Background:
The record gives the reactivity of an RNA of 177 nucleotides to DMS and 2A3.
[RMDB]
RNA sequence: GGGAACGACUCGAGUAGAGUCGAAAAAAGUGUUGGAUUGUUCACCCACUAACAAGGAACGUGAGCUGGGUUUAGACCGUCGUGAGACAGGUUAGUUUUACCCUACUGUUGUCAAUUAUUUACGUAAUCGUUAUGUGUUUUUCGAAACACAUAACGAAAAAGAAACAACAACAACAAC
Reactivity to DMS in 0.01 (KOAc 150mM, MgCl2 10mM, bicine 150mM(pH8.5), 24C), signal-to-noise 6, nucleotides 027 to 126: a070a060g020u000g010u020u010g010g010a140u010u010g010u010u000c040a100c030c010c030a120c070u010a080a080c160a090a100g000g000a110a050c150g020u000g000a050g010c100u000g000g000g000u010u010u010a100g010a020c010c010g000u000c020g000u040g000a230g010a020c020a050g030g000u000u000a050g010u000u020u010u000a100c030c000c020u030a070c090u000g000u000u000g010u000c070a090a110u010u010a100u010u000u010a070c150g020u010a110a110
Reactivity to 2A3 in 0.01 (KOAc 150mM, MgCl2 10mM, bicine 150mM(pH8.5), 24C), signal-to-noise 4, nucleotides 027 to 126: a010a000g120u070g020u060u060g030g010a100u000u090g010u100u050c020a040c000c010c020a020c040u040a080a010c040a060a030g100g000a100a020c100g040u050g020a020g020c060u060g010g010g000u020u040u040a020g000a020c040c010g040u010c040g040u040g090a070g010a050c110a140g020g020u020u010a050g030u010u070u030u070a040c000c000c010u040a050c020u020g020u020u000g020u020c010a040a030u130u090a120u050u230u150a080c110g020u120a060a090